[RMDB]
RNA sequence: GGGAACGACUCGAGUAGAGUCGAAAAAUCGCCUUCGAGCCGUAGCGUCGUCACGGCCGUCGAUGGCGCAACGUUGUAGCGCUCUGACUGUUCGCCGACGAGGUUGACCAGGACGUUGGGCAUCGACGGGUUUUGGUCUAUUCGUAGACCAAAACCCAAAAGAAACAACAACAACAAC
Reactivity to DMS in 0.01 (KOAc 150mM, MgCl2 10mM, bicine 150mM(pH8.5), 24C), signal-to-noise 2, nucleotides 027 to 126: a080u010c090g000c020c010u000u000c070g010a200g020c010c000g060u020a070g030c070g000u010c170g000u000c100a060c080g000g000c000c030g030u000c000g010a030u000g050g020c000g020c030a020a010c010g030u000u000g000u010a150g010c090g000c110u010c070u000g000a220c040u000g010u000u000c060g000c030c010g030a150c210g020a220g000g010u010u000g020a060c040c030a020g010g000a060c100g000u000u000g010g020g010c060a090u000c020g000a030c040